RNA sequence: GGGAACGACUCGAGUAGAGUCGAAAAGGCUUCCGUACAGGCCAUGAAUCCUGCUUCUCGGGCGGUGUUCGAUCUGAGGGAGGACGACGAUGACGAGGAUGAUAUGGAGGACGAGUCGGCGGCCUGAACGGAAGCCGUGUGAGCGCGUGGGCGUCACUAACAAGCCUUAUUUCGAUAAGGCUUGUUAAAAAGAAACAACAACAACAAC
Reactivity to 2A3 in 0.01 (KOAc 150mM, MgCl2 10mM, bicine 150mM(pH8.5), 24C), signal-to-noise 4, nucleotides 027 to 156: g010g010c010u000u010c000c000g000u020a040c010a010g000g010c010c000a030u140g080a010a070u030c010c000u060g130c020u150u080c020u010c020g010g010g040c030g100g000u140g080u110u170c100g050a300u050c030u090g030a100g020g060g010a030g040g000a020c030g010a000c010g070a070u110g040a020c020g000a010g090g000a020u070g020a030u050a120u270g060g010a030g030g030a040c050g010a000g050u060c010g010g030c020g020g010c020c000u000g010a010a000c000g000g000a000a000g010c000c010g000u000g000u000g000a130g030c000g000c040g040u180g050g100g000c000g010u030c010a000c020
Reactivity to DMS in 0.01 (KOAc 150mM, MgCl2 10mM, bicine 150mM(pH8.5), 24C), signal-to-noise 2, nucleotides 027 to 156: g000g020c000u010u000c000c020g040u000a170c000a000g020g020c000c020a190u090g000a160a080u000c020c000u020g010c050u000u010c010u000c020g020g030g040c020g000g030u020g030u000u000c040g010a110u020c030u000g020a110g010g020g000a160g020g020a080c060g000a040c070g000a100u000g000a000c060g000a080g040g020a060u000g020a100u000a070u010g000g030a050g010g020a100c150g000a240g030u000c020g000g010c070g000g010c040c010u040g030a120a020c010g040g020a010a000g010c000c000g000u000g020u010g000a080g030c020g020c030g000u010g010g010g010c020g000u000c050a080c150